[RMDB]
RNA sequence: GGGAACGACUCGAGUAGAGUCGAAAAAUCCCAAGCAGGAUCAAACAUCCCUCCGAGAUCUUCACGGUAACGCCCGUGCCGAUCUCAAAUCCCGCUUUUCUCAGCCAUUUGGCGCUGAUUUUGAUCAUUAGCAUCCACGGUUCGCCGUGGAUGCUAAAAAAGAAACAACAACAACAAC
Reactivity to 2A3 in 0.01 (KOAc 150mM, MgCl2 10mM, bicine 150mM(pH8.5), 24C), signal-to-noise 2, nucleotides 027 to 126: a010u000c010c000c010a000a010g000c040a000g030g000a010u050c050a000a150a160c120a120u130c000c010c000u200c110c020g000a000g000a000u020c000u000u000c020a000c030g050g070u100a300a080c120g020c000c010c010g000u000g000c010c000g000a000u000c000u000c000a010a010a000u000c000c000c000g040c120u050u070u150u100c040u010c000a050g000c000c020a150u070u110u300g070g000c200g000c010u000g060a070u100u010u090u150g090a070u110c100a100
The record gives the reactivity of an RNA of 177 nucleotides to 2A3.
The reactions ran in a buffer of 150 mM KOAc, 10 mM MgCl2 and 150 mM bicine (pH 8.5), at 24 C.
For 2A3 the reverse transcriptase was SuperScript II with manganese.